Notes: The record gives the reactivity of an RNA of 177 nucleotides to DMS. DMS adducts were read by reverse transcription with MarathonRT. The RNA was probed in 150 mM KOAc, 10 mM MgCl2 and 150 mM bicine (pH 8.5) at 24 C.
RNA sequence: GGGAACGACUCGAGUAGAGUCGAAAAAAAAGAUAUGGACGGUACUACCCACCUAACCCUCUGACGAAGAACGAAUUCGGAAACGAAUUCGGGAGUCACGGUUAGAGGUACCGUCCUAAGUCAAAAACUGUUUUAAAAAGUUCGCUUUUUAAAACAGAAAAGAAACAACAACAACAAC
Reactivity to DMS in 0.01 (KOAc 150mM, MgCl2 10mM, bicine 150mM(pH8.5), 24C), signal-to-noise 2, nucleotides 027 to 126: a170a030a060a130g060a110u020a220u010g010g010a040c000g000g020u000a000c000u000a090c030c010c060a300c100c000u010a000a020c000c000c000u010c010u000g000a010c000g040a060a170g020a180a170c000g010a010a010u000u000c010g030g000a050a050a180c000g010a000a000u000u000c000g000g000g000a070g020u000c010a010c180g010g010u000u010a000g000a080g080g000u000a000c000c010g020u000c000c000u020a020a060g020u000c060a060a110a100a130a130